[RMDB]
RNA sequence: GGGAACGACUCGAGUAGAGUCGAAAAUCAGGGGCCAGAUUAACACGAAAUGAGGAGGAUUCCGGAAGUUAACGCACAAAAGGAGGAUCAGGGCGCAGAUUUUCCGCCAGGAAGCGCUCGCCCCACACGAUAUAAGAAGUUUCGACUUCUUAUAUCGAAAAGAAACAACAACAACAAC
Reactivity to DMS in 0.01 (KOAc 150mM, MgCl2 10mM, bicine 150mM(pH8.5), 24C), signal-to-noise 9, nucleotides 027 to 126: u020c060a100g010g010g000g000c020c050a080g000a090u010u010a060a070c070a110c100g010a040a080a090u020g010a120g010g000a080g000g000a130u010u010c020c010g000g000a100a070g010u000u010a040a060c110g000c110a080c120a060a040a080a100g010g000a070g000g010a060u010c100a100g000g000g010c020g020c040a060g010a140u000u000u010u000c030c010g000c100c100a110g000g010a090a060g010c050g010c010u000c040g000c020c000c000c030a070c220a160
Reactivity to 2A3 in 0.01 (KOAc 150mM, MgCl2 10mM, bicine 150mM(pH8.5), 24C), signal-to-noise 8, nucleotides 027 to 126: u100c020a020g000g000g020g010c010c000a010g040a120u080u080a110a030c060a020c120g070a050a070a080u170g020a050g040g030a020g040g010a030u100u010c020c000g010g020a040a010g020u050u090a100a030c050g020c080a020c040a070a070a030a040g030g020a060g010g010a030u060c060a040g030g030g000c020g000c010a010g010a110u100u040u060u020c010c020g030c030c020a020g020g020a030a020g010c010g000c010u010c010g010c000c010c000c000a010c010a000